[RMDB]
RNA sequence: GGGAACGACUCGAGUAGAGUCGAAAACUUUUCUCUUGUGGAACAGGCACUUUUGGGUCUAAAGUGUAUAUAAUAAGAACAUACGUUCCUUCAUAGAGGAGUGAUUUCAUGGACCCGUCGGUAAACACGUAUAUAUCGCCUUCGGGCGAUAUAUACGAAAAGAAACAACAACAACAAC
Reactivity to DMS in 0.01 (KOAc 150mM, MgCl2 10mM, bicine 150mM(pH8.5), 24C), signal-to-noise 2, nucleotides 027 to 126: c020u000u000u000u000c000u000c000u000u020g050u000g000g000a010a060c070a120g040g000c000a010c000u010u000u020u030g000g000g010u040c010u010a030a060a010g000u000g000u000a110u060a100u020a180a080u010a090a190g000a080a110c180a130u030a170c090g020u000u000c000c000u010u010c060a050u040a000g020a050g000g000a030g010u040g000a070u020u000u040c080a090u000g000g040a050c020c000c010g010u110c210g000g000u000a070a070a040c090a160
Reactivity to 2A3 in 0.01 (KOAc 150mM, MgCl2 10mM, bicine 150mM(pH8.5), 24C), signal-to-noise 4, nucleotides 027 to 126: c000u040u030u130u080c040u010c000u010u060g040u060g000g000a020a020c030a040g030g100c000a000c000u000u000u090u140g030g000g040u070c040u050a050a030a000g020u020g100u010a010u050a010u040a300a220u150a150a050g100a180a020c050a090u250a080c110g000u000u000c010c000u030u120c060a130u120a120g010a010g050g000a010g060u060g080a160u040u160u200c160a150u110g030g020a030c010c040c010g040u100c090g130g080u100a040a080a000c010a010